RNA sequence: GGGAACGACUCGAGUAGAGUCGAAAAUAGUCACCGUCAACAGACUGGUUUACUUCAGAUCUAAAUAGUCGACACUUAGGGUCAGAGUAAACUUCAUGUCCUCUCAUGCUACAGAGUGUCCUGGUGAUCGCGAGCAUAGCUUCGGCUAUGCUCGCGAAAAAGAAACAACAACAACAAC
Reactivity to 2A3 in 0.01 (KOAc 150mM, MgCl2 10mM, bicine 150mM(pH8.5), 24C), signal-to-noise 1, nucleotides 027 to 126: u250a100g000u000c000a000c130c000g160u270c140a260a030c000a100g060a090c060u100g000g030u000u000u000a070c060u000u140c030a010g000a150u000c000u170a000a020a090u170a110g090u090c070g050a010c020a030c080u060u240a030g010g000g010u010c000a000g000a000g030u000a000a030a030c000u000u130c140a150u300g000u000c030c000u020c000u000c000a000u200g050c020u090a060c000a050g010a010g010u140g040u000c070c000u220g140g000u010g060a050